[RMDB]
Structure probing data (DMS and 2A3) for a 207-nucleotide construct. Conditions: 150 mM KOAc, 10 mM MgCl2 and 150 mM bicine (pH 8.5), 24 C. 2A3 is a SHAPE reagent: it acylates the 2'-hydroxyl of flexible nucleotides of all four kinds. DMS adducts were read by reverse transcription with MarathonRT.
RNA sequence: GGGAACGACUCGAGUAGAGUCGAAAACGAUACGGCUCCUGAUUAUCCAGUAACUACCGAUGAUACGGUAGCCGAAUCCGAAACUGGAGCAGGAGAAACGAUGGCUGAGUACUUAACAGACAGCGAUCCUGCAACGGAGGAGCGCGAACAAGGGGUGAAAAAGGAUACUAUUCGUAGUAUCCUUUUUAAAAGAAACAACAACAACAAC
Reactivity to DMS in 0.01 (KOAc 150mM, MgCl2 10mM, bicine 150mM(pH8.5), 24C), signal-to-noise 4, nucleotides 027 to 156: c060g000a180u010a080c020g020g000c000u000c010c000u000g010a160u000u000a240u010c020c000a050g010u000a110a050c010u000a020c000c000g030a140u010g040a220u000a220c000g010g000u000a010g040c020c070g010a100a080u000c160c070g000a080a070a060c020u000g010g020a080g030c010a020g000g000a060g000a060a050a100c040g030a090u000g000g030c000u000g000a190g020u000a110c180u000u010a070a230c030a070g020a060c000a080g000c020g040a090u000c010c000u000g020c040a100a080c110g010g010a060g010g010a030g010c000g010c040g020a050a120c070a080a090g040g020g050g020u010g000
Reactivity to 2A3 in 0.01 (KOAc 150mM, MgCl2 10mM, bicine 150mM(pH8.5), 24C), signal-to-noise 2, nucleotides 027 to 156: c030g030a010u130a110c030g080g000c000u010c000c000u010g050a200u070u150a070u080c000c010a000g020u040a040a120c000u000a050c020c030g110a140u150g050a050u100a200c000g000g010u000a010g040c020c060g020a010a060u090c020c070g080a080a040a070c000u000g010g010a010g000c000a000g000g010a000g020a030a060a000c050g070a070u030g070g000c010u010g030a000g120u120a100c070u130u060a150a020c000a030g080a020c010a000g030c010g020a020u040c000c020u020g040c080a100a130c120g060g010a050g000g010a010g010c130g000c050g060a000a000c020a080a060g070g000g000g060u210g000